[RMDB]
RNA sequence: GGGAACGACUCGAGUAGAGUCGAAAAAAUGCCCCAUGAUGCUCAGGUCCGCCGCAUCUCCUGAAUCGUGGGGUCGGUCGGCUGACGAUGUCCGAAUCGGUUCCUCGUGCCGUAAUCACAUCGUUGGGGCCAAAUAGCUAUUCGUAGCUAUUUGGCCAAAAGAAACAACAACAACAAC
Reactivity to DMS in 0.01 (KOAc 150mM, MgCl2 10mM, bicine 150mM(pH8.5), 24C), signal-to-noise 2, nucleotides 027 to 126: a060a060u050g010c000c010c000c010a010u000g000a010u010g000c190u000c030a030g010g000u000c060c050g030c040c080g000c070a130u020c120u030c010c020u010g010a030a040u020c000g000u000g000g000g000g000u000c090g000g020u030c000g000g000c020u010g010a020c030g020a020u000g050u020c060c060g000a160a050u000c000g000g000u010u030c050c070u000c060g010u040g000c010c020g030u020a100a100u020c080a030c000a000u000c020g000u000u000g020g000
Reactivity to 2A3 in 0.01 (KOAc 150mM, MgCl2 10mM, bicine 150mM(pH8.5), 24C), signal-to-noise 3, nucleotides 027 to 126: a000a000u190g020c010c000c010c000a000u030g000a000u040g030c030u020c070a010g010g030u040c020c040g060c030c010g040c050a070u030c090u030c030c000u010g020a040a020u020c010g010u010g010g000g000g040u020c000g030g060u050c020g020g010c020u010g010a010c020g000a020u030g000u040c040c050g000a030a090u040c010g010g020u050u100c020c020u060c040g090u130g020c000c000g020u020a060a100u080c080a010c000a040u010c000g010u010u000g000g000